The data come from the RNA Mapping Database (RMDB), library OK3TST.
An RNA of 207 nucleotides, treated with DMS and 2A3 and read out base by base.
Values cover nucleotides 27 to 156.
The DMS profile rests on 2,505 reads.
High DMS reactivity at an A or C suggests that its Watson-Crick edge is free.
Conditions: 150 mM KOAc, 10 mM MgCl2 and 150 mM bicine (pH 8.5), 24 C.
RNA sequence: GGGAACGACUCGAGUAGAGUCGAAAAAAUUGUUGCUUAUAUCUCAACAGUUGCAAGAAAACAUUAACAAUAUCAACAACACACUACUAGACCUUGAAUGGCUAGAUAGGCUUGAAACCUAUAUCAAGUGGCCUUGGUGGGUGUGGUUGAUUUUUGCCAUAGUUGGCAGGUUCGCCUGCCAACUAUGAAAAGAAACAACAACAACAAC
Reactivity to DMS in 0.01 (KOAc 150mM, MgCl2 10mM, bicine 150mM(pH8.5), 24C), signal-to-noise 1, nucleotides 027 to 156: a120a100u000u000g010u000u000g000c020u000u020a120u000a110u010c040u000c050a120a120c060a160g020u000u000g000c060a070a170g000a150a040a070a150c060a130u000u020a080a060c100a030a060u010a100u000c030a050a030c010a080a020c030a030c000a050c000u010a060c030u000a030g010a010c000c000u020u000g040a080a120u010g010g000c110u000a120g010a030u000a000g090g000c000u000u000g030a120a110a050c000c000u000a010u010a130u010c000a030a100g040u010g000g030c020c010u000u000g070g020u000g000g020g000u000g030u000g000g010u000u000g010a020u000u000u000u000u000g000c080
Reactivity to 2A3 in 0.01 (KOAc 150mM, MgCl2 10mM, bicine 150mM(pH8.5), 24C), signal-to-noise 2, nucleotides 027 to 156: a000a010u090u140g010u000u000g000c030u180u080a150u100a150u220c020u030c060a050a270c040a070g040u090u080g070c120a090a080g140a080a070a040a050c050a050u150u180a040a040c060a020a070u050a010u110c030a010a010c000a070a000c000a000c020a000c010u040a020c020u030a050g160a230c020c000u040u130g080a130a070u120g140g000c000u000a000g000a040u000a000g040g000c000u050u130g060a170a030a000c020c020u040a030u000a010u080c000a030a060g020u100g220g070c010c020u030u020g000g000u000g030g060g010u000g000u000g040g060u010u000g000a000u010u000u000u050u120g060c010
For 2A3 the reverse transcriptase was SuperScript II with manganese.